This 177-nucleotide RNA was probed chemically with 2A3.
RNA sequence: GGGAACGACUCGAGUAGAGUCGAAAAAAAGUCUCUCAUUAGCCGCGCGAACCUCUGCACCGGAAGAUCCUAUGUUUUAAAAAUAUAGAACAACAAUAUACUAGCGUAUUUUAUCAUUGCUUCUUAGCUCUUGAGGAGUUUUCGAACUCCUCAAGAGAAAAGAAACAACAACAACAAC
Reactivity to 2A3 in 0.01 (KOAc 150mM, MgCl2 10mM, bicine 150mM(pH8.5), 24C), signal-to-noise 1, nucleotides 027 to 126: a000a000a000g060u030c030u000c000u000c010a070u100u120a010g020c030c000g090c000g010c030g090a050a070c000c020u000c010u030g000c000a010c000c020g050g000a060a020g010a060u000c000c000u090a050u080g040u050u010u010u110a120a200a040a000a000u180a000u020a030g030a030a000c010a020a010c000a110a040u130a000u040a140c030u030a010g040c030g110u020a070u040u170u030u070a140u110c070a030u030u020g000c000u000u000c000u000u000a000g000
Reactivities are given for positions 27 through 126.
2A3 adducts were read by reverse transcription with SuperScript II with manganese.
It was measured as part of the RMDB library RFM100.